[RMDB]
RNA sequence: GGGAACGACUCGAGUAGAGUCGAAAAUUUUAGGGACAAUCAGAUUUGAAUACUUGCAAGUCUUACCUUUCAAACACAAAGCUAUGAGUAUUGCAAGAAGCGACACUUACUGGAAACAGCUUGUGUCCAGCUACGGCUCGUUCGCGAGCCGUAGCUGAAAAGAAACAACAACAACAAC
Reactivity to 2A3 in 0.01 (KOAc 150mM, MgCl2 10mM, bicine 150mM(pH8.5), 24C), signal-to-noise 1, nucleotides 027 to 126: u170u130u070u170a010g000g040g040a000c030a200a250u190c110a050g030a260u140u060u160g150a200a000u070a140c010u000u000g020c010a000a050g140u000c000u000u000a030c000c010u000u000u000c250a300a300a000c000a010c150a140a000a000g000c000u050a000u000g010a000g000u000a040u240u000g000c000a000a040g050a010a000g180c040g000a000c000a000c000u010u300a120c000u010g070g000a010a010a010c000a000g030c000u000u120g000u000g000u000c000
An RNA of 177 nucleotides, treated with 2A3 and read out base by base. 2A3 adducts were read by reverse transcription with SuperScript II with manganese. Reactivities are rounded to 0.1 and cut off at 0 and 3. Conditions: 150 mM KOAc, 10 mM MgCl2 and 150 mM bicine (pH 8.5), 24 C.